[RMDB]
RNA sequence: GGGAACGACUCGAGUAGAGUCGAAAAUGAUUUCGUGGUAUCUAAAGGUUUCUUUAAGGAGGGCUCUUCAGUGACGCUCAAACAUUUUUUCUUUGCUCAAGAUGGUAAUGCUGCUAUUACAGAUUAUAUACUGUCCUCUUCGGAGGACAGAAAAGAAACAACAACAACAAC
Reactivity to DMS in 0.01 (KOAc 150mM, MgCl2 10mM, bicine 150mM(pH8.5), 24C), signal-to-noise 3, nucleotides 027 to 129: u000g000a000u000u000u000c000g000u020g000g110u000a040u010c040u040a010a020a010g000g060u000u000u030c060u000u000u110a080a160g030g040a090g020g030g010c050u050c050u030u000c110a040g050u070g020a100c210g050c070u030c040a110a040a110c170a060u030u030u040u060u010u000c010u020u000u010g010c060u020c030a000a000g050a060u020g010g020u000a020a040u000g000c090u050g010c010u050a080u040u050a110c050a100g000a100u000u000a010u020a100u030a190
Reactivity to 2A3 in 0.01 (KOAc 150mM, MgCl2 10mM, bicine 150mM(pH8.5), 24C), signal-to-noise 3, nucleotides 027 to 129: u150g030a060u070u000u030c100g000u050g000g000u010a050u130c050u140a040a020a010g090g000u040u030u010c020u000u060u110a130a010g080g020a040g000g020g000c030u050c000u070u000c000a060g010u080g100a090c020g000c000u030c010a000a060a030c050a060u080u000u000u000u040u010c080u050u050u010g060c000u000c020a000a160g020a180u020g040g070u060a020a010u040g000c050u030g000c040u010a000u070u120a070c050a010g060a020u150u010a010u030a000u030a090

Annotation
The record gives the reactivity of an RNA of 170 nucleotides to DMS and 2A3. High 2A3 reactivity points to a flexible backbone, as in loops and unpaired stretches. 2A3 adducts were read by reverse transcription with SuperScript II with manganese. It was measured as part of the RMDB library 15KLIB. Values cover nucleotides 27 to 129. Conditions: 150 mM KOAc, 10 mM MgCl2 and 150 mM bicine (pH 8.5), 24 C.